An RNA of 177 nucleotides, treated with DMS and 2A3 and read out base by base. For 2A3, 3,568 sequencing reads were counted. 2A3 adducts were read by reverse transcription with SuperScript II with manganese.
RNA sequence: GGGAACGACUCGAGUAGAGUCGAAAAGACACGACGGAGACGUCGUGUCAAAGAGUGGGAAACCACUCAAAGAGCCACAGCUUCGGCUGUGGCUCAAGGCGCGGCACCCUCCGCGGAACAAACGGAACUCACUCAUUUAUUUCGAUAAAUGAGUGAGAAAAGAAACAACAACAACAAC
Reactivity to DMS in 0.01 (KOAc 150mM, MgCl2 10mM, bicine 150mM(pH8.5), 24C), signal-to-noise 2, nucleotides 027 to 126: g000a030c010a020c010g030a020c010g030g000a210g000a220c010g030u000c000g020u000g000u000c000a000a080a110g000a020g010u020g000g010g000a150a150a180c000c000a000c000u000c000a040a050a080g020a040g040c000c000a000c000a050g000c010u000u010c240g030g000c010u010g070u000g000g000c000u000c010a020a050g000g020c000g020c000g010g040c050a140c010c010c000u000c000c030g030c010g010g000a080a080c160a050a060a080c180g000g010a130a190
Reactivity to 2A3 in 0.01 (KOAc 150mM, MgCl2 10mM, bicine 150mM(pH8.5), 24C), signal-to-noise 2, nucleotides 027 to 126: g020a010c010a000c010g020a000c020g010g030a060g040a060c010g010u010c000g010u000g000u000c000a000a000a000g000a000g000u010g010g000g010a030a080a090c000c000a010c000u000c000a040a050a000g010a010g000c000c020a010c000a020g040c030u160u170c300g110g000c000u010g000u000g020g010c030u000c000a000a000g020g000c010g000c000g000g000c050a130c000c000c000u040c010c000g010c000g010g030a030a030c070a060a050a020c070g090g040a050a040